[RMDB]
RNA sequence: GGGAACGACUCGAGUAGAGUCGAAAAAGAAGACUUCACUUCAGAAGAAACUCAUGAUCAUGCAUGAUCAGCCUACGAGAGUGACUAGAAGGUCACGGCGUUGAGACCAGAAAGCACUAGACGAGAGUGCAGUCUUACGAUUCGUCGUAAGACUGCAAAAAGAAACAACAACAACAAC
Reactivity to 2A3 in 0.01 (KOAc 150mM, MgCl2 10mM, bicine 150mM(pH8.5), 24C), signal-to-noise 1, nucleotides 027 to 126: a000g020a040a010g010a000c040u070u000c010a020c090u160u110c080a100g060a050a000g010a070a130a000c010u020c050a080u030g000a040u000c010a010u100g260c040a090u010g010a040u040c010a000g050c020c000u040a050c030g040a040g000a010g120u000g040a110c010u020a010g090a200a010g080g000u040c000a030c090g090g080c010g110u160u230g050a050g030a130c000c040a000g070a040a000a000g000c020a000c040u000a040g130a130c100g000a020g040a000g250
Reactivity to DMS in 0.01 (KOAc 150mM, MgCl2 10mM, bicine 150mM(pH8.5), 24C), signal-to-noise 2, nucleotides 027 to 126: a100g020a060a020g000a130c040u000u010c030a180c130u000u030c130a130g010a020a050g020a110a090a060c030u000c020a110u000g000a010u010c040a070u010g020c200a110u000g010a030u000c030a030g010c050c020u000a090c090g010a130g000a070g000u000g000a120c000u010a050g000a180a110g020g000u020c000a040c030g000g000c090g010u000u010g000a130g010a090c050c040a080g000a210a070a030g000c050a050c050u000a080g000a110c060g000a110g010a080g010
The record gives the reactivity of an RNA of 177 nucleotides to 2A3 and DMS. The reactions ran in a buffer of 150 mM KOAc, 10 mM MgCl2 and 150 mM bicine (pH 8.5), at 24 C. For 2A3 the reverse transcriptase was SuperScript II with manganese.